[RMDB]
RNA sequence: GGGAACGACUCGAGUAGAGUCGAAAACAUCAAAUCUUCUCGCGCUUACAUGAACUCAGCUAUUGGGAAUAGGAGAAUCAAACUAUGAUCGGGGAUGUUUGUUCGAAGUGCGGCGGUGAUCACCGAAAGUGGACGCAAGGUUGCGAGAGUUGCCGCGCAAUGGAAUCAGGUUCGCCUGAUUCCAUUGAAAAGAAACAACAACAACAAC
Reactivity to 2A3 in 0.01 (KOAc 150mM, MgCl2 10mM, bicine 150mM(pH8.5), 24C), signal-to-noise 3, nucleotides 027 to 156: c030a080u140c060a060a050a110u060c050u130u030c010u030c000g010c000g010c020u110u100a070c010a180u150g030a090a040c010u020c040a030g020c040u110a070u140u140g040g030g020a100a050u080a050g060g030a030g040a030a080u060c020a030a070a040c030u110a080u150g010a050u140c030g000g010g090g000a030u030g080u060u060u110g010u020u030c050g040a100a030g040u060g130c000g010g010c010g060g000u030g030a030u110c020a020c050c050g060a120a060a020g050u040g030g070a010c020g010c070a060a020g110g030u140u140g090c020g000a010g000a010g000u010u080g010c030c020g030c000g000
Reactivity to DMS in 0.01 (KOAc 150mM, MgCl2 10mM, bicine 150mM(pH8.5), 24C), signal-to-noise 2, nucleotides 027 to 156: c040a090u000c040a070a060a110u010c040u000u020c010u000c030g010c050g040c000u010u010a070c040a110u000g020a090a160c050u000c040a090g010c050u000a110u010u010g040g000g050a070a080u000a050g000g010a040g020a030a070u000c060a090a040a150c050u000a080u000g000a130u010c020g020g000g000g010a070u000g010u010u000u000g030u000u010c050g010a070a240g070u000g020c150g020g000c050g030g000u000g000a090u010c000a210c020c030g020a050a080a160g030u020g000g030a120c050g000c050a050a110g000g020u000u000g010c000g000a150g020a210g020u000u010g020c000c050g010c100g020

The record gives the reactivity of an RNA of 207 nucleotides to 2A3 and DMS. The RNA was probed in 150 mM KOAc, 10 mM MgCl2 and 150 mM bicine (pH 8.5) at 24 C. For 2A3 the reverse transcriptase was SuperScript II with manganese. Source: RMDB library OK3TST, as collected in RNAgym.